[RMDB]
RNA sequence: GGGAACGACUCGAGUAGAGUCGAAAAAGUUAGGUUCGCUAUGGUGCAACUCUUUAAGGCAAUAACGAACUAAUUCUAAGCAAGUGAUGGAGAAAUGCCAGGGUCACUAUCUAGCCAUAAUAGUGCUGUAAGUGACUUAGAUUCGUCUAAGUCACAAGCAUGAACACACGUUCGCGUGUGUUCAUGCAAAAGAAACAACAACAACAAC
Reactivity to 2A3 in 0.01 (KOAc 150mM, MgCl2 10mM, bicine 150mM(pH8.5), 24C), signal-to-noise 1, nucleotides 027 to 156: a000g110u080u050a010g000g100u000u070c020g070c050u040a020u050g100g000u080g010c080a150a160c020u020c130u190u240u300a080a000g010g040c000a020a080u080a070a010c100g010a000a000c010u080a000a060u050u040c030u080a040a000g060c020a000a120g050u010g000a070u080g000g020a020g080a120a090a050u110g010c000c050a070g060g000g000u040c000a000c070u000a050u180c050u060a000g000c000c000a030u040a200a130u080a120g030u070g020c010u030g040u110a270a100g000u000g010a000c030u000u000a000g000a000u000u030c100g000u040c220u000a000a000g000u000c000a000c000a000a000
Structure probing data (2A3) for a 207-nucleotide construct. The reactions ran in a buffer of 150 mM KOAc, 10 mM MgCl2 and 150 mM bicine (pH 8.5), at 24 C. Values cover nucleotides 27 to 156. 2A3 is a SHAPE reagent: it acylates the 2'-hydroxyl of flexible nucleotides of all four kinds.